[RMDB]
RNA sequence: GGGAACGACUCGAGUAGAGUCGAAAAGGGAAGGCCGUGAAGGCGAAGGUUAGCUUCCGGUUUAAGGAAGUGUAGAGACUUCCUGAUACUACUGUCAGAAACUACUGUUACUGCGUGCUUCAGGCACCAUUGCGUACUAAUUCGUUAGUACGCAAUGAAAAGAAACAACAACAACAAC
Reactivity to 2A3 in 0.01 (KOAc 150mM, MgCl2 10mM, bicine 150mM(pH8.5), 24C), signal-to-noise 6, nucleotides 027 to 126: g090g010g030a070a040g100g000c040c030g110u140g110a060a020g030g000c030g030a020a020g060g020u080u090a010g010c000u020u000c020c000g060g020u090u150u150a040a020g000g000a000a010g000u020g020u110a060g030a010g030a060c010u020u020c000c000u000g020a020u040a130c070u020a030c030u060g060u080c020a020g040a040a070a030c050u140a030c040u080g030u130u070a050c030u050g040c010g030u040g070c000u050u100c070a070g080g000c010a010c010
Reactivity to DMS in 0.01 (KOAc 150mM, MgCl2 10mM, bicine 150mM(pH8.5), 24C), signal-to-noise 9, nucleotides 027 to 126: g010g010g010a080a060g000g010c020c010g010u020g010a100a080g010g010c020g010a100a090g010g010u010u010a110g010c020u000u000c020c010g000g010u020u020u040a160a060g000g010a010a000g010u000g010u020a090g010a190g000a100c020u000u000c010c000u000g000a090u020a070c100u030a090c110u010g010u010c070a050g000a080a050a040c040u010a060c150u020g000u010u010a080c040u010g000c070g010u000g000c000u000u020c130a120g010g000c010a060c080